The record gives the reactivity of an RNA of 177 nucleotides to 2A3 and DMS. 2A3 adducts were read by reverse transcription with SuperScript II with manganese. The RNA was probed in 150 mM KOAc, 10 mM MgCl2 and 150 mM bicine (pH 8.5) at 24 C. As a SHAPE reagent, 2A3 marks flexible, mostly unpaired nucleotides at the ribose 2'-OH. Source: RMDB library OK2TRN, as collected in RNAgym.

[RMDB]
RNA sequence: GGGAACGACUCGAGUAGAGUCGAAAAUGCCAGGCUAGGUGAGGAGGCAGCUGUUAACCAGGGGUCGCAAACGGGUAGUCCUGGGGCCCUGCGCAUUCCACACAUGUGCUUUGUUUGGUCUGCAGAGGGGUCAUGUAGUAUUCGUACUACAUGACCCAAAAGAAACAACAACAACAAC
Reactivity to 2A3 in 0.01 (KOAc 150mM, MgCl2 10mM, bicine 150mM(pH8.5), 24C), signal-to-noise 1, nucleotides 027 to 126: u150g020c000c020a010g000g000c000u030a030g000g020u070g150a080g090g020a040g040g010c000a020g000c000u070g030u170u130a010a040c040c000a010g110g030g000g180u010c020g010c130a050a080a090c070g070g020g050u080a070g070u100c010c000u020g020g000g060g000c010c020c000u000g010c030g000c020a040u060u030c040c000a040c010a010c000a030u050g080u110g190c080u090u060u050g020u030u020u050g040g010u010c000u040g000c030a010g020a020g290
Reactivity to DMS in 0.01 (KOAc 150mM, MgCl2 10mM, bicine 150mM(pH8.5), 24C), signal-to-noise 3, nucleotides 027 to 126: u010g000c020c020a100g010g000c040u010a050g010g000u010g010a080g010g010a140g020g000c050a070g020c050u000g020u000u010a170a160c120c050a050g000g010g010g000u020c030g050c080a040a120a090c160g000g020g010u010a060g000u000c000c020u010g010g010g010g010c120c140c030u000g020c230g000c030a030u000u000c020c030a040c050a040c080a030u000g000u000g020c180u000u010u000g000u020u000u000g000g010u000c040u000g040c060a110g040a170g020